[RMDB]
RNA sequence: GGGAACGACUCGAGUAGAGUCGAAAAACACAGACUACUUUGCCGAGUUUGUUGUCUUGGUAGUGGUAGCACUGUUGGGAGGGAGGUACGUUCUGUGGCUAAUAGUGACCUACACAAUUCUAACAGAGCACACUUAGAUUUUCGAAUCUAAGUGUGCAAAAGAAACAACAACAACAAC
Reactivity to DMS in 0.01 (KOAc 150mM, MgCl2 10mM, bicine 150mM(pH8.5), 24C), signal-to-noise 3, nucleotides 027 to 126: a110c080a050c100a080g030a260c010u000a020c010u000u000u000g000c010c030g030a010g000u000u000u010g000u000u000g000u000c000u020u000g010g020u000a010g010u010g000g000u000a020g000c060a150c040u000g020u000u000g010g000g010a090g010g000g020a100g000g010u000a010c150g000u020u010c030u000g040u000g000g010c100u000a060a060u010a070g010u000g020a110c060c040u020a050c040a070c090a050a110u010u000c030u000a040a080c120a080g020a220
Reactivity to 2A3 in 0.01 (KOAc 150mM, MgCl2 10mM, bicine 150mM(pH8.5), 24C), signal-to-noise 3, nucleotides 027 to 126: a000c020a020c020a020g060a080c010u010a010c000u050u040u050g030c010c000g020a020g050u050u060u110g090u010u090g030u050c010u020u020g020g010u020a070g080u020g060g000u010a010g020c080a060c160u000g040u040u030g030g030g040a100g030g040g010a170g060g010u050a030c020g040u050u030c020u040g090u060g040g020c060u060a090a070u040a150g070u040g050a120c010c040u090a020c080a010c020a070a130u110u110c050u050a060a010c000a040g070a050
Chemical mapping of a 177-nucleotide RNA with DMS and 2A3. The reactions ran in a buffer of 150 mM KOAc, 10 mM MgCl2 and 150 mM bicine (pH 8.5), at 24 C. Reactivities are given for positions 27 through 126. For DMS, 2,540 sequencing reads were counted.